The record gives the reactivity of an RNA of 207 nucleotides to 2A3 and DMS. Reactivities are given for positions 27 through 156. DMS adducts were read by reverse transcription with MarathonRT. It was measured as part of the RMDB library M2RFPK. The reactions ran in a buffer of 150 mM KOAc, 10 mM MgCl2 and 150 mM bicine (pH 8.5), at 24 C.
RNA sequence: GGGAACGACUCGAGUAGAGUCGAAAAUAACACUGGCGGCUGCGUACCACUCUAGGGUACGUGAUAGUGCGAUAUAAGAAGCACUGGUACAUGCCGGCAGGGACAGUUAAGAGAUGGCCGCAGUCUCAAAAGGGGUCAUUCUUCGGAAUGACCCCAACAGAUGGACUAGAUUCGUCUAGUCCAUCUGAAAAGAAACAACAACAACAAC
Reactivity to 2A3 in 0.01 (KOAc 150mM, MgCl2 10mM, bicine 150mM(pH8.5), 24C), signal-to-noise 3, nucleotides 027 to 156: u060a020a000c020a000c040u030g190g010c010g010g000c000u040g000c020g000u010a010c000c000a100c070u180c150u200a140g080g000g050u010a000c000g010u010g030a040u070a020g000u000g000c030g040a010u020a010u080a300a070g130a120a010g000c000a000c000u010g000g020u110a080c030a070u130g000c000c000g030g000c000a000g030g000g010a030c070a090g000u030u070a110a010g000a000g010a010u040g060g050c020c020g070c080a020g010u010c010u010c040a040a070a000a060g010g000g000g000u000c000a010u000u000c010u030u050c200g050g000a000a000u000g000a000c020c010c000c000a000a000
Reactivity to DMS in 0.01 (KOAc 150mM, MgCl2 10mM, bicine 150mM(pH8.5), 24C), signal-to-noise 2, nucleotides 027 to 156: u000a070a110c040a050c010u000g000g010c000g010g020c020u000g000c030g010u000a000c000c000a170c140u000c140u000a170g030g000g010u000a000c010g010u010g020a150u000a020g010u000g020c000g020a160u010a170u010a140a160g000a190a270g000c010a010c010u010g010g010u000a080c110a060u000g030c000c030g020g000c010a040g010g000g010a070c080a100g010u010u000a090a130g000a080g030a070u000g020g030c050c070g000c040a300g010u000c010u010c020a100a040a110a200g000g010g070g010u000c000a030u000u000c010u000u000c220g050g000a030a020u000g000a010c000c000c020c000a000a010